[RMDB]
RNA sequence: GGGAACGACUCGAGUAGAGUCGAAAAUGUCUCGCCUGAAGAGGACGAAAGUCCGAAACAGUAAUGUUAGUCUCCGGUUCCUAGCUGACGGUUUUAAGUCAGAAGAAGUUUCUUCUUGACUGAGCCACAACCUAUGAGUGUUCGCACUCAUAGGUUGAAAAGAAACAACAACAACAAC
Reactivity to DMS in 0.01 (KOAc 150mM, MgCl2 10mM, bicine 150mM(pH8.5), 24C), signal-to-noise 3, nucleotides 027 to 126: u000g010u000c000u000c020g000c120c000u000g000a060a080g010a300g010g010a020c020g020a090a090a130g010u000c010c000g010a180a130a050c030a030g000u010a110a070u010g010u000u010a080g000u000c020u000c020c050g000g000u000u010c010c000u000a110g010c100u000g010a090c130g010g000u000u000u000u000a110a050g020u000c000a010g010a020a010g000a030a230g020u000u010u000c010u000u000c000u010u010g000a010c010u000g000a080g010c020c010a290
Reactivity to 2A3 in 0.01 (KOAc 150mM, MgCl2 10mM, bicine 150mM(pH8.5), 24C), signal-to-noise 2, nucleotides 027 to 126: u080g060u000c000u010c030g040c000c010u050g040a120a030g060a040g030g000a000c000g070a100a000a040g000u000c020c040g020a030a010a000c020a020g010u150a040a200u140g040u040u060a010g050u000c020u020c120c030g070g000u020u000c000c000u010a070g010c060u090g070a050c010g000g100u000u000u040u210a070a000g010u000c000a020g000a030a000g020a050a030g110u120u290u050c010u000u040c000u110u170g020a010c000u010g050a000g000c020c000a050
Chemical mapping of a 177-nucleotide RNA with DMS and 2A3. The 2A3 profile rests on 1,641 reads. It was measured as part of the RMDB library VIROID. Conditions: 150 mM KOAc, 10 mM MgCl2 and 150 mM bicine (pH 8.5), 24 C. Values cover nucleotides 27 to 126. DMS adducts were read by reverse transcription with MarathonRT. The DMS profile rests on 3,121 reads.